[RMDB]
RNA sequence: GGGAACGACUCGAGUAGAGUCGAAAAUAUCAGCAAAGGAAACAACCUCAAUCAAAUUUCCUCCACUUUGAACAUACUCGUACAAUGAUAGUGGAACCAAUAAAUUGGCAAUAUGAGUGUGACAAACCUGGAGCUGGUAUUUCGAUACCAGCUCCAGAAAAGAAACAACAACAACAAC
Reactivity to 2A3 in 0.01 (KOAc 150mM, MgCl2 10mM, bicine 150mM(pH8.5), 24C), signal-to-noise 1, nucleotides 027 to 126: u220a150u130c040a000g060c080a000a000a300g000g010a060a140a000c000a000a120c050c040u010c030a040a020u240c050a030a030a030u050u100u000c040c050u020c000c000a000c000u000u000u000g040a060a060c000a000u110a100c070u040c000g050u000a000c050a020a020u120g090a100u010a230g000u000g110g000a050a030c000c000a010a010u100a190a070a300u050u010g000g000c050a000a020u040a060u120g000a000g020u010g050u010g000a020c030a010a050a000c000
Notes: This 177-nucleotide RNA was probed chemically with 2A3. 2A3 adducts were read by reverse transcription with SuperScript II with manganese. The reactions ran in a buffer of 150 mM KOAc, 10 mM MgCl2 and 150 mM bicine (pH 8.5), at 24 C.